[RMDB]
RNA sequence: GGGAACGACUCGAGUAGAGUCGAAAACAUAUCAGUUUCUCCAAAAUCUGAGUAAUGAGAUAGAAAAAGAAUCAGAAAUUACAGAUCUUCAAGAUUACAACCCAAGACCUGAAAGGUUUUUACAAGACACCAGUAUCCCGUUCGCGGGAUACUGGUGAAAAGAAACAACAACAACAAC
Reactivity to 2A3 in 0.01 (KOAc 150mM, MgCl2 10mM, bicine 150mM(pH8.5), 24C), signal-to-noise 2, nucleotides 027 to 126: c000a000u130a040u110c040a050g010u000u010u000c210u030c000c090a020a280a000a000u200c100u070g000a000g010u070a010a010u070g070a030g160a140u220a170g170a000a280a070a030a000g030a090a040u060c040a000g040a090a170a100u130u110a100c070a000g070a040u070c040u060u000c130a050a000g030a100u090u150a040c030a170a230c090c000c000a000a000g000a100c000c000u160g150a150a120a120g040g000u050u000u000u040u000a180c070a070a160g110a000
This 177-nucleotide RNA was probed chemically with 2A3. The reactions ran in a buffer of 150 mM KOAc, 10 mM MgCl2 and 150 mM bicine (pH 8.5), at 24 C. For 2A3, 347 sequencing reads were counted.